[RMDB]
RNA sequence: GGGAACGACUCGAGUAGAGUCGAAAACACAGGAUCGUGUGGAAGUCCUGCUCGGGGCGGAAGCAUUAAAAGCAUUCGAGCUAGUCAAUGCGUGGCGUGUCUCUCCGCAGCGUGUUGGCGAAUGUAACAAGCUGCCUCUCGUUCGCGAGAGGCAGAACUCUAUAUGUAGGUUCGCCUACAUAUAGAGAAAAGAAACAACAACAACAAC
Reactivity to 2A3 in 0.01 (KOAc 150mM, MgCl2 10mM, bicine 150mM(pH8.5), 24C), signal-to-noise 5, nucleotides 027 to 156: c030a000c010a030g240g040a280u210c130g030u010g010u030g030g030a050a030g030u020c000c000u020g020c030u020c030g000g010g020g000c030g010g060a050a010g060c040a020u150u230a060a060a050a020g000c010a030u050u100c060g030a040g080c070u050a020g040u020c000a000a000u000g000c000g020u030g040g010c010g020u080g060u030c040u010c020u030c130c000g000c010a010g000c010g010u020g000u000u000g010g000c010g000a010a010u080g030u100a090a110c060a080a030g040c000u000g000c000c000u000c000u000c010g010u060u050c170g010c020g090a010g000a000g000g010c000a000g000a000a000
Reactivity to DMS in 0.01 (KOAc 150mM, MgCl2 10mM, bicine 150mM(pH8.5), 24C), signal-to-noise 2, nucleotides 027 to 156: c040a080c020a120g000g010a070u000c090g030u010g050u010g000g010a280a170g000u000c020c020u000g020c070u000c110g030g020g020g000c030g020g010a190a210g020c040a080u010u000a070a060a130a190g020c030a110u000u020c090g000a130g030c100u000a180g020u000c020a020a040u000g020c000g020u000g020g020c060g030u010g020u010c080u000c050u000c250c010g010c020a100g010c000g000u000g000u010u000g010g000c030g020a090a050u010g020u010a070a140c040a080a160g010c010u000g040c000c020u000c010u010c010g000u000u000c290g020c000g000a000g000a000g030g120c000a010g000a010a070